[RMDB]
RNA sequence: GGGAACGACUCGAGUAGAGUCGAAAAGCAAGAGAAUCACAGAUCUCAACAAAACCUACCUUGUUUCUUGCUGUGAGAAUGUGAUGUUUCCUUCAGAGUAUGGAACAAGGCUCGAGAAGGGGUUAGAUAAAUAGCGUAUGUUCGCAUACGCUAUUUAAAAAGAAACAACAACAACAAC
Reactivity to DMS in 0.01 (KOAc 150mM, MgCl2 10mM, bicine 150mM(pH8.5), 24C), signal-to-noise 9, nucleotides 027 to 126: g020c110a100a090g010a070g020a090a060u000c050a060c090a090g000a140u010c010u000c020a060a110c100a070a050a080a090c060c060u010a110c080c060u000u000g000u000u000u000c010u000u000g010c030u000g020u000g010a030g000a050a060u010g010u010g010a060u010g010u010u000u000c030c040u000u000c030a130g000a030g020u000a030u000g010g020a060a050c050a040a050g000g010c090u000c080g010a110g010a080a070g010g000g010g010u010u010a070g010a190
Reactivity to 2A3 in 0.01 (KOAc 150mM, MgCl2 10mM, bicine 150mM(pH8.5), 24C), signal-to-noise 8, nucleotides 027 to 126: g050c030a080a050g050a020g040a110a070u070c030a050c020a110g120a210u010c010u010c020a030a110c030a020a150a020a030c010c020u050a050c020c020u060u040g030u030u050u030c020u040u080g040c040u050g060u030g120a020g040a060a070u110g040u090g080a070u070g120u090u230u040c010c000u010u000c010a000g000a010g070u020a030u080g000g000a010a010c020a050a070g040g000c020u020c040g230a240g020a050a040g060g010g010g020u070u070a040g020a140
An RNA of 177 nucleotides, treated with DMS and 2A3 and read out base by base. 2A3 adducts were read by reverse transcription with SuperScript II with manganese.